[RMDB]
An RNA of 177 nucleotides, treated with DMS and 2A3 and read out base by base. The 2A3 profile rests on 1,857 reads. It was measured as part of the RMDB library TTRDEL. Values cover nucleotides 27 to 126.

RNA sequence: GGGAACGACUCGAGUAGAGUCGAAAAGAUAUGGAGUAGACGAAUGAACUACUCUGUACCAUCGGAAACGAUGGGUAGGAGCACUAUCUACUCCUAAGUCAAAGAGGUCCAGUUCGCUGGACCUCAAGAGUCUGCAUAAGUUCGCUUAUGCAGACUCAAAAGAAACAACAACAACAAC
Reactivity to DMS in 0.01 (KOAc 150mM, MgCl2 10mM, bicine 150mM(pH8.5), 24C), signal-to-noise 2, nucleotides 027 to 126: g000a030u000a300u010g000g010a010g010u000a000g000a030c150g010a170a130u010g000a130a120c160u000a140c040u000c060u000g010u030a300c000c000a000u000c000g000g000a110a060a210c000g010a010u000g000g010g020u000a300g000g020a020g000c110a030c070u020a150u000c030u000a020c000u000c000c020u000a050a080g000u000c060a020a060a240g000a050g010g010u000c000c010a000g020u020u000c300g000c000u020g000g000a010c000c000u000c000a000a070
Reactivity to 2A3 in 0.01 (KOAc 150mM, MgCl2 10mM, bicine 150mM(pH8.5), 24C), signal-to-noise 2, nucleotides 027 to 126: g010a000u090a040u090g010g010a030g000u000a000g000a050c100g110a120a300u240g030a080a040c070u230a040c000u300c020u090g210u300a050c020c000a010u000c000g000g000a090a020a030c010g000a010u010g010g000g080u060a020g000g000a010g060c030a000c070u070a050u010c010u000a000c000u000c000c000u040a060a010g010u020c030a060a090a100g010a010g030g010u010c000c000a000g020u040u050c170g060c120u010g000g000a000c020c000u020c000a030a000